RNA sequence: GGGAACGACUCGAGUAGAGUCGAAAAACUUCAACUCCAAAUCCGCAAUAAGGGGACAACCAAGAAUGGUACUCGUUAUACUACCAUCAAUACGAGGAUGUCCGGCGACAAGAACACUGGGCUAGGAGGAUGGGGACUAUUUCGAUAGUCCCCAUCCAAAAGAAACAACAACAACAAC
Reactivity to 2A3 in 0.01 (KOAc 150mM, MgCl2 10mM, bicine 150mM(pH8.5), 24C), signal-to-noise 1, nucleotides 027 to 126: a000c000u170u060c070a100a060c000u000c010c000a000a070a050u060c000c010g090c060a100a110u090a110a080g120g020g000g000a020c010a010a010c000c010a060a000g110a180a080u040g000g000u030a020c020u050c020g220u110u030a110u090a160c060u060a060c020c000a010u030c050a020a070u160a210c070g060a060g020g040a050u010g000u000c030c000g070g000c050g040a030c010a000a110g070a190a000c040a020c170u130g030g020g070c010u030a040g030g030a030
Reactivity to DMS in 0.01 (KOAc 150mM, MgCl2 10mM, bicine 150mM(pH8.5), 24C), signal-to-noise 1, nucleotides 027 to 126: a110c110u000u000c060a060a060c090u000c010c000a080a040a130u000c040c050g000c070a140a140u040a190a160g020g020g000g070a110c000a150a090c040c090a050a090g030a140a030u000g010g000u000a040c050u000c030g010u010u000a060u000a060c160u000a050c040c000a140u010c010a090a050u000a000c090g000a160g030g000a160u000g060u000c000c080g000g040c010g000a180c060a060a130g000a030a080c290a050c150u000g040g000g040c030u000a080g000g030a050
Structure probing data (2A3 and DMS) for a 177-nucleotide construct. The RNA was probed in 150 mM KOAc, 10 mM MgCl2 and 150 mM bicine (pH 8.5) at 24 C. The data come from the RNA Mapping Database (RMDB), library OK2TST.